[RMDB]
RNA sequence: GGGAACGACUCGAGUAGAGUCGAAAAAUAGGCUUAUCAAGAGAGGUGGAGGGACUGGCCCGAUGAAACCCGGCAGCUAGAAAUGGUGCCAAUUCCUGCAGCGGAAACGUUGAAAGAUGAGCCGAUGCGAGGGAAAGGUUCGCCUUUCCCAAAAGAAACAACAACAACAAC
Reactivity to 2A3 in 0.01 (KOAc 150mM, MgCl2 10mM, bicine 150mM(pH8.5), 24C), signal-to-noise 4, nucleotides 027 to 129: a000u130a010g020g000c000u010u020a020u050c110a140a010g070a000g000a060g070g030u050g020g020a020g020g000g000a000c000u010g020g010c000c000c000g070a140u080g040a020a020a020c010c000c000g000g000c020a030g030c000u020a020g070a050a110a050u110g040g000u020g000c000c000a010a020u040u020c000c000u040g040c020a000g020c020g010g030a080a050a030c030g000u010u050g050a070a040a000g020a010u010g000a000g020c010c010g020a040u100g060c080g040a110
Reactivity to DMS in 0.01 (KOAc 150mM, MgCl2 10mM, bicine 150mM(pH8.5), 24C), signal-to-noise 7, nucleotides 027 to 129: a080u000a020g010g010c020u040u020a040u030c010a060a090g050a140g010a080g010g000u000g030g010a040g020g010g040a130c130u010g020g010c040c000c000g030a070u040g020a080a100a060c060c000c050g000g060c060a040g010c060u000a060g030a090a060a080u000g030g010u020g030c000c000a030a050u000u000c020c000u000g000c040a030g030c030g000g000a060a060a100c070g000u020u010g030a110a090a110g030a000u000g000a010g020c030c000g000a030u060g000c090g000a130

This 170-nucleotide RNA was probed chemically with 2A3 and DMS. Values cover nucleotides 27 to 129. The reactions ran in a buffer of 150 mM KOAc, 10 mM MgCl2 and 150 mM bicine (pH 8.5), at 24 C. The 2A3 profile rests on 31,804 reads. The data come from the RNA Mapping Database (RMDB), library 15KLIB.